[RMDB]
Description:
An RNA of 177 nucleotides, treated with DMS and 2A3 and read out base by base. Reactivities are given for positions 27 through 126.
RNA sequence: GGGAACGACUCGAGUAGAGUCGAAAAGGCAAAUUUAUGACAACAUCGCCGCGACCACUACGCCAUCGACAGGUGAAGGACUUCAGGAAACGCGUCUGAAGCAGGAUGUGUAUUAUCUUGAAAAGCCCAUCCCCUAAUGAUUCGUCAUUAGGGGAUGAAAAGAAACAACAACAACAAC
Reactivity to DMS in 0.01 (KOAc 150mM, MgCl2 10mM, bicine 150mM(pH8.5), 24C), signal-to-noise 6, nucleotides 027 to 126: g020g030c060a050a040a070u030u010u030a070u020g020a120c080a120a110c100a080u020c080g000c000c030g000c050g010a140c030c040a080c070u000a100c080g010c020c040a080u010c050g000a080c080a080g010g000u010g010a100a140g010g010a060c090u000u010c020a020g000g000a030a090a060c020g000c060g010u010c010u010g000a070a060g020c160a110g000g020a010u010g000u010g020u020a070u030u020a060u000c010u000u010g000a040a040a070a100g010c040c030
Reactivity to 2A3 in 0.01 (KOAc 150mM, MgCl2 10mM, bicine 150mM(pH8.5), 24C), signal-to-noise 9, nucleotides 027 to 126: g050g020c070a060a080a090u140u180u100a200u240g070a050c040a140a020c010a120u110c050g000c020c010g010c010g030a060c010c030a050c060u110a040c040g050c020c010a050u070c040g070a060c050a060g030g000u020g060a040a030g020g010a040c000u020u000c020a000g010g010a050a070a030c020g010c010g040u000c010u070g080a110a040g080c040a020g000g040a010u000g050u010g030u050a100u210u060a060u130c010u010u030g030a040a040a040a020g010c000c000
2A3 is a SHAPE reagent: it acylates the 2'-hydroxyl of flexible nucleotides of all four kinds. The reactions ran in a buffer of 150 mM KOAc, 10 mM MgCl2 and 150 mM bicine (pH 8.5), at 24 C. The 2A3 profile rests on 13,013 reads. It was measured as part of the RMDB library OK1LIB.